[RMDB]
RNA sequence: GGGAACGACUCGAGUAGAGUCGAAAACGGGCAGGGUGAAAUUCCCGAUCGGCGGUAAAGUCCGCGAGCCGAACGAAAAAGGUUUGGCAGGAACCGGUGAGAUUCCGGUACCGACAGUAUAGUCUGGAUGACCACUUCAGCUUCGGCUGAAGUGGAACAUGUGUAUCAUGUUCGCAUGAUACACAUGAAAAGAAACAACAACAACAAC
Reactivity to DMS in 0.01 (KOAc 150mM, MgCl2 10mM, bicine 150mM(pH8.5), 24C), signal-to-noise 4, nucleotides 027 to 156: c020g020g040g030c070a240g020g020g030u010g000a090a170a210u010u000c000c000c000g020a040u000c010g020g000c010g010g000u000a070a210a050g010u000c010c010g000c000g010a300g030c010c000g010a020a070c030g030a070a090a130a120a130g010g010u000u000u010g010g030c000a050g020g020a040a020c000c010g010g000u000g000a290g000a300u000u000c010c000g000g030u000a020c000c000g000a060c020a050g000u000a250u010a070g000u000c010u020g000g010a190u000g010a180c000c000a010c000u000u010c000a000g010c010u000u000c300g050g000c000u000g000a000a010g020u010g000g010a020a040